About this RNA:
An RNA of 177 nucleotides, treated with DMS and 2A3 and read out base by base. DMS adducts were read by reverse transcription with MarathonRT.

RNA sequence: GGGAACGACUCGAGUAGAGUCGAAAAGGGAAACUUCAAUUUUUAUAAUCCCAACCCUCCGGUGGAAGUAGGUUCGGUGUCUGAGGGAAAGUCCUGUCGCGUACAACUUGGUCUCUACAACUCAGUACGUAUGUGAAAGAUUCGUCUUUCACAUACGAAAAGAAACAACAACAACAAC
Reactivity to DMS in 0.01 (KOAc 150mM, MgCl2 10mM, bicine 150mM(pH8.5), 24C), signal-to-noise 6, nucleotides 027 to 126: g010g000g010a070a100a120c140u000u010c100a060a070u020u000u020u010u010a110u020a190a130u000c000c000c000a110a220c050c010c000u000c060c050g000g020u000g010g010a060a080g010u010a060g020g010u010u000c060g010g010u010g010u010c030u000g000a100g010g010g010a060a070a120g010u000c030c030u000g020u000c060g020c070g010u000a050c090a060a080c080u000u000g020g010u000c020u000c040u000a070c100a050a080c080u010c070a090g000u010a140
Reactivity to 2A3 in 0.01 (KOAc 150mM, MgCl2 10mM, bicine 150mM(pH8.5), 24C), signal-to-noise 4, nucleotides 027 to 126: g030g000g020a110a080a070c040u140u070c120a170a250u070u070u040u160u090a200u120a160a130u000c030c010c020a030a040c010c010c000u030c040c030g110g030u080g040g070a090a070g020u090a040g070g010u070u070c030g000g010u010g030u000c040u050g020a050g000g000g030a070a060a000g050u040c020c020u070g030u090c050g000c040g080u090a030c020a060a020c090u030u050g040g010u030c030u000c000u060a060c040a130a080c040u040c060a050g070u080a040
Reactivities are given for positions 27 through 126. The RNA was probed in 150 mM KOAc, 10 mM MgCl2 and 150 mM bicine (pH 8.5) at 24 C. Source: RMDB library OK2TRN, as collected in RNAgym.